[RMDB]
RNA sequence: GGGAACGACUCGAGUAGAGUCGAAAACGCUCGUCCUUGAGCUCAAGCGCCAGUUUGAGGAGGACAAGGAGUCGGAUAAGGCGGCGGCGUACGCGCGGCUGCUGUGGGACACAGCGCUGCUGGAGAGGAGUAGUUGUCAGUUCGCUGACAACUACUCAAAAGAAACAACAACAACAAC
Reactivity to DMS in 0.01 (KOAc 150mM, MgCl2 10mM, bicine 150mM(pH8.5), 24C), signal-to-noise 3, nucleotides 027 to 126: c100g020c050u000c050g010u010c010c010u010u000g000a150g020c000u010c020a040a020g020c020g020c220c220a070g020u010u010u000g000a010g020g000a040g000g010a030c030a170a070g010g000a060g020u020c030g000g000a080u030a100a170g010g010c040g000g010c020g000g030c030g020u010a050c120g010c070g030c030g000g000c020u010g020c000u000g010u000g010g000g010a220c060a080c040a030g000c010g020c030u010g000c020u000g000g010a200g000a180g030
Reactivity to 2A3 in 0.01 (KOAc 150mM, MgCl2 10mM, bicine 150mM(pH8.5), 24C), signal-to-noise 2, nucleotides 027 to 126: c040g010c010u020c030g010u040c020c000u030u100g050a070g070c000u000c010a020a020g000c020g070c100c130a070g000u030u040u030g040a010g040g010a020g000g030a010c000a020a070g170g000a050g040u130c080g030g060a130u050a200a060g060g000c020g000g010c000g030g000c030g040u040a050c090g030c000g020c000g060g070c010u050g000c000u010g050u040g040g120g060a050c030a000c010a080g030c060g010c050u080g000c030u040g040g070a090g020a030g210

This 177-nucleotide RNA was probed chemically with DMS and 2A3. For DMS the reverse transcriptase was MarathonRT. Source: RMDB library OK2TRN, as collected in RNAgym. The 2A3 profile rests on 2,410 reads.